[RMDB]
RNA sequence: GGGAACGACUCGAGUAGAGUCGAAAAGAUAUGGACGCUGGUGGGAGCGUGCGGUCGGAAACGACCGGCACGCGAAGAACACUUGCGUCCUAAGUCAAAACUCCAGAAGAGUUCGCUCUUCUGGAGAGCGAACAAUAAUGUUCGCAUUAUUGUUCGCAAAAGAAACAACAACAACAAC
Reactivity to 2A3 in 0.01 (KOAc 150mM, MgCl2 10mM, bicine 150mM(pH8.5), 24C), signal-to-noise 3, nucleotides 027 to 126: g010a000u020a010u060g000g010a000c010g000c010u020g020g010u020g010g020g070a280g000c010g000u000g010c000g000g010u000c000g010g000a040a000a010c020g010a000c010c100g050g190c010a000c000g020c010g030a060a020g020a010a000c010a000c010u020u010g010c010g000u000c000c000u000a000a000g000u000c000a010a030a070a150c000u000c000c000a000g010a020a000g020a000g030u120u240c300g100c100u010c000u010u000c000u000g000g000a000g000a000
Reactivity to DMS in 0.01 (KOAc 150mM, MgCl2 10mM, bicine 150mM(pH8.5), 24C), signal-to-noise 5, nucleotides 027 to 126: g000a030u000a050u020g000g000a010c000g020c010u000g000g010u000g010g020g000a040g030c000g040u000g030c000g000g000u000c000g030g000a020a010a020c000g010a020c000c000g020g050c000a000c000g020c000g010a040a070g000a230a300c010a010c010u000u000g000c010g020u000c000c000u000a000a060g000u000c010a120a080a180a230c010u000c000c000a010g000a020a020g010a010g010u000u010c260g020c010u000c000u000u000c000u010g010g000a000g000a030